RNA sequence: GGGAACGACUCGAGUAGAGUCGAAAAAGUUGUAGAAGCUCAUAUUAAAAGCCUUUGAUGAUCUUAGGCAUCAACUGAAAAGGAGGGAGAUCCAAUAUACAUUGGAAGAAGGAGAAUGGUAGACAAGCCCUGAGAGUCAGACUCUCCUAGCCUCAUAUGACCCUAAUUUAUUCGUAAAUUAGGGUCAAAAAGAAACAACAACAACAAC
Reactivity to DMS in 0.01 (KOAc 150mM, MgCl2 10mM, bicine 150mM(pH8.5), 24C), signal-to-noise 2, nucleotides 027 to 156: a140g030u010u010g020u000a060g010a120a180g040c000u000c100a140u000a200u000u010a040a120a120a180g010c000c000u010u000u020g010a090u000g000a140u010c030u000u010a070g050g010c010a090u000c090a050a100c060u000g000a100a130a070a070g000g010a060g010g010g010a080g030a130u000c000c010a010a060u010a300u000a060c040a100u000u010g010g000a060a180g020a130a060g000g000a080g010a010a070u010g010g000u010a070g010a040c040a070a090g010c050c010c010u000g010a070g000a060g030u020c050a090g010a220c010u010c010u000c020c020u000a080g030c000c000u000c010a030u000a100